Overview:
An RNA of 170 nucleotides, treated with DMS and 2A3 and read out base by base.
[RMDB]
RNA sequence: GGGAACGACUCGAGUAGAGUCGAAAAGGUGGGUGUUCCUCCCCCCGAGAGGGGAAGAGUGAGGCUUAUCCCGGGGAACCCGGCGAAUGCCCCCACAUAGCAGAGUCCGGGACCCCCUCCUAAAAGAUUAGGUAAGCGUUCGCGCUUACCAAAAGAAACAACAACAACAAC
Reactivity to DMS in 0.01 (KOAc 150mM, MgCl2 10mM, bicine 150mM(pH8.5), 24C), signal-to-noise 3, nucleotides 027 to 129: g150g070u170g030g020g060u010g050u010u000c040c010u040c020c040c140c030c020c030g010a140g040a270g000g000g000g000a090a070g000a090g010u070g000a090g050g000c070u010u040a100u010c000c000c000g010g120g080g010a150a170c000c030c010g000g000c020g050a300a150u030g000c020c000c020c010c020a070c200a080u050a000g080c000a040g010a190g040u000c020c000g000g030g000a110c140c000c000c000c030u000c010c020u050a000a000a000a000g040a000u060u060a160
Reactivity to 2A3 in 0.01 (KOAc 150mM, MgCl2 10mM, bicine 150mM(pH8.5), 24C), signal-to-noise 4, nucleotides 027 to 129: g040g010u060g000g000g010u040g070u060u020c000c020u020c030c000c000c010c010c000g160a110g060a100g100g030g000g020a030a040g030a010g010u270g030a000g000g010c000u030u080a060u040c010c000c020g020g000g010g010a090a070c000c000c000g000g000c030g090a170a030u080g010c000c000c000c050c000a130c050a140u170a010g020c030a000g030a020g140u060c010c020g020g010g010a030c000c000c000c000c000u010c000c020u020a040a040a020a040g120a040u180u220a060
The RNA was probed in 150 mM KOAc, 10 mM MgCl2 and 150 mM bicine (pH 8.5) at 24 C. As a SHAPE reagent, 2A3 marks flexible, mostly unpaired nucleotides at the ribose 2'-OH. For DMS, 7,299 sequencing reads were counted. It was measured as part of the RMDB library 15KLIB. DMS adducts were read by reverse transcription with MarathonRT.